[RMDB]
RNA sequence: GGGAACGACUCGAGUAGAGUCGAAAAGAUAUGGAGCCUCAAGGGAGCUCGUGGUCGGAAACGACCACAGAGCAUCGAUCUUGUGGCUCCUAAGUCAAAAGUAAAAGGCUGUUCGCAGCCUUUUACACCCCUAUCAAUGGUUCGCCAUUGAUAGGGGAAAAGAAACAACAACAACAAC
Reactivity to DMS in 0.01 (KOAc 150mM, MgCl2 10mM, bicine 150mM(pH8.5), 24C), signal-to-noise 2, nucleotides 027 to 126: g010a010u000a010u000g000g000a030g020c000c010u000c010a020a010g010g000g000a030g030c000u000c000g020u000g010g000u010c020g010g000a020a000a020c000g010a000c010c010a000c000a010g000a010g040c000a280u010c300g000a030u000c010u000u010g010u000g010g000c000u010c000c000u000a000a050g010u000c010a110a090a130a210g010u000a000a010a020a020g000g030c010u000g000u000u000c230g030c010a000g000c000c010u000u000u030u000a000c010a280
Reactivity to 2A3 in 0.01 (KOAc 150mM, MgCl2 10mM, bicine 150mM(pH8.5), 24C), signal-to-noise 1, nucleotides 027 to 126: g000a000u010a000u050g000g000a000g000c010c000u020c020a010a000g020g040g020a090g030c000u010c010g000u010g000g000u020c000g000g000a030a010a000c010g000a000c000c040a010c040a030g000a000g020c010a020u300c040g030a030u000c000u000u000g000u040g000g000c000u000c000c000u000a000a000g000u000c000a010a000a030a080g010u000a000a000a000a000g000g020c010u050g100u150u190c300g000c130a010g000c000c000u000u000u010u000a000c000a020